[RMDB]
Structure probing data (DMS) for a 177-nucleotide construct. The reactions ran in a buffer of 150 mM KOAc, 10 mM MgCl2 and 150 mM bicine (pH 8.5), at 24 C.

RNA sequence: GGGAACGACUCGAGUAGAGUCGAAAAUGCCAAAAAGGAGGAAAUACAUACCGGUACGGCUCACGGUGCGGCAGUGUGGAGACCUGUUGUAAAGCGCGGCGCCCAUCGCGGUACCGCGUGAGAACGCGGAGUGAAAUGACUUCGGUCAUUUCACUCCAAAAGAAACAACAACAACAAC
Reactivity to DMS in 0.01 (KOAc 150mM, MgCl2 10mM, bicine 150mM(pH8.5), 24C), signal-to-noise 1, nucleotides 027 to 126: u000g020c000c040a020a090a020a180a140g000g000a060g000g000a120a020a060u010a110c070a100u020a060c080c040g050g000u000a020c170g010g000c000u000c090a070c020g000g000u010g020c010g000g010c090a000g070u040g060u020g010g000a060g030a190c050c000u000g000u000u000g020u010a050a140a260g020c000g010c010g000g000c010g000c000c000c000a070u020c300g000c160g020g010u000a040c020c010g000c000g020u000g020a020g010a040a040c220g050c300